[RMDB]
RNA sequence: GGGAACGACUCGAGUAGAGUCGAAAAUUGUUCCAUUCGAGCAGUGGGGUUAGGCAGGGUUGCCCGAUCUCACCAUUCCUCUUCAACUUUGCCAUCGACGACAUCCUGGAAACAGCUCUAGUGGAUGAGCUGGAUCCUGAUUCGUCAGGAUCCAGCUAAAAGAAACAACAACAACAAC
Reactivity to 2A3 in 0.01 (KOAc 150mM, MgCl2 10mM, bicine 150mM(pH8.5), 24C), signal-to-noise 2, nucleotides 027 to 126: u180u100g060u070u000c020c060a040u120u090c050g000a030g070c040a000g080u030g000g020g010g000u050u020a060g000g000c040a010g140g100g290u170u020g050c010c000c050g040a020u000c010u000c010a020c020c030a030u030u100c010c000u010c060u160u010c040a090a070c060u060u190u290g030c010c000a070u000c070g110a090c020g000a000c030a060u080c000c080u090g090g000a160a010a000c030a040g000c000u010c000u020a030g100u010g160g020a110u080g020